[RMDB]
RNA sequence: GGGAACGACUCGAGUAGAGUCGAAAAAUAAAUAGUGCGUGGACGCACCCACGCAUUCAUGCGUAGGCAGUUGUUCGCAUUAGUAGAGCUUAGCCUGUACUAAGCGAACAACAAGUACAACAAAAAAGAACAUGACAAUGUUCGCAUUGUCAUGUUCAAAAGAAACAACAACAACAAC
Reactivity to DMS in 0.01 (KOAc 150mM, MgCl2 10mM, bicine 150mM(pH8.5), 24C), signal-to-noise 5, nucleotides 027 to 126: a060u010a050a100a090u010a060g020u000g000c000g030u000g000g010a150c190g010c200a120c120c000c010a000c010g000c010a010u010u000c210a110u010g010c120g010u000a130g010g010c120a110g000u000u000g000u000u000c000g020c000a070u010u000a000g010u010a010g000a030g000c010u000u000a100g020c140c010u000g000u000a000c000u000a000a010g000c000g000a020a000c000a000a000c010a040a140g000u000a040c100a050a060c080a010a060a090a040a080a090
Reactivity to 2A3 in 0.01 (KOAc 150mM, MgCl2 10mM, bicine 150mM(pH8.5), 24C), signal-to-noise 5, nucleotides 027 to 126: a000u190a000a080a050u170a030g010u000g000c010g010u020g020g000a060c110g020c120a050c000c010c000a010c000g000c000a010u030u030c020a040u080g060c020g040u030a060g100g020c080a060g030u010u000g000u020u000c040g000c120a230u020u010a000g000u000a010g010a000g110c020u110u060a030g020c030c000u030g020u010a000c000u000a000a010g000c010g010a010a000c000a000a000c000a000a000g040u030a030c020a100a010c030a010a100a020a020a000a020

Structure probing data (DMS and 2A3) for a 177-nucleotide construct. Source: RMDB library M2PK90, as collected in RNAgym. High 2A3 reactivity points to a flexible backbone, as in loops and unpaired stretches.